[RMDB]
RNA sequence: GGGAACGACUCGAGUAGAGUCGAAAAGAUAUGGAACUUCGAGUGCAAGAUUCUCGUCGGAAACGACGAGAAAUUGAUGACCACUCUUUGGAAGUUCCUAAGUCAAACGAACGCUUCGGCGUUCGAAGAACUUAUAGUUCUUCGGAACUAUAAGUUCAAAAGAAACAACAACAACAAC
Reactivity to DMS in 0.01 (KOAc 150mM, MgCl2 10mM, bicine 150mM(pH8.5), 24C), signal-to-noise 5, nucleotides 027 to 126: g000a000u000a240u010g010g000a010a010c010u000u000c100g020a030g010u010g020c080a090a080g010a070u000u000c000u010c000g020u000c000g010g000a070a050a120c000g020a020c000g000a020g000a000a010a020u000u000g000a110u020g000a230c300c010a010c000u000c010u010u010u020g030g020a020a030g010u000u010c010c000u000a020a100g010u000c020a070a090a240c020g000a010a000c000g030c000u000u020c190g030g010c000g000u000u000c000g000a060a110